[RMDB]
Chemical mapping of a 207-nucleotide RNA with DMS and 2A3.
RNA sequence: GGGAACGACUCGAGUAGAGUCGAAAAAUUCAUAGAAAUGAGCAUGUAGCUAGUGGUGAUGCUAUCAUGACUAGAUGUCUCGCUAUACAUGACUGUUUCGUCAAACGUGUUGAUUGGUCAAUUGUGUACCCUUUUAUUGACAAUGAAGAGAAGAUCAGCUUAUAUGUCGGUUCGCCGACAUAUAAGCAAAAGAAACAACAACAACAAC
Reactivity to DMS in 0.01 (KOAc 150mM, MgCl2 10mM, bicine 150mM(pH8.5), 24C), signal-to-noise 2, nucleotides 027 to 156: a100u010u000c040a110u020a140g010a030a030a070u010g020a040g030c010a020u000g010u000a050g050c110u010a080g050u000g030g050u000g000a080u010g010c030u010a100u000c090a070u010g010a170c130u000a040g020a050u000g030u000c030u000c030g040c000u000a140u020a030c040a030u010g020a050c030u030g030u000u000u000c040g010u000c050a030a060a050c080g000u000g020u000u010g000a140u000u000g000g010u000c040a050a090u000u020g000u020g050u010a120c030c010c030u010u000u010u000a170u050u000g020a040c040a040a100u010g010a050a090g020a100g000a080a080g000a120u000c070a100
Reactivity to 2A3 in 0.01 (KOAc 150mM, MgCl2 10mM, bicine 150mM(pH8.5), 24C), signal-to-noise 3, nucleotides 027 to 156: a000u160u080c040a020u030a080g050a010a070a020u090g040a060g020c000a010u020g040u050a010g010c060u030a020g040u050g130g020u080g010a040u070g070c010u030a040u170c040a080u120g120a080c030u000a050g030a140u030g000u000c040u000c060g000c000u020a020u040a070c030a050u040g110a140c000u020g050u030u070u050c000g040u020c080a120a050a040c080g040u050g000u110u060g110a250u010u100g040g000u030c000a010a050u050u080g040u040g040u190a110c010c010c000u050u130u000u070a070u000u020g000a000c080a030a100u110g040a040a090g040a000g040a070a040g000a090u040c050a010
In probing experiments dimethyl sulfate is read out at A N1 and C N3, which are open when not base-paired. For 2A3 the reverse transcriptase was SuperScript II with manganese. Reactivities are given for positions 27 through 156. For DMS, 3,316 sequencing reads were counted.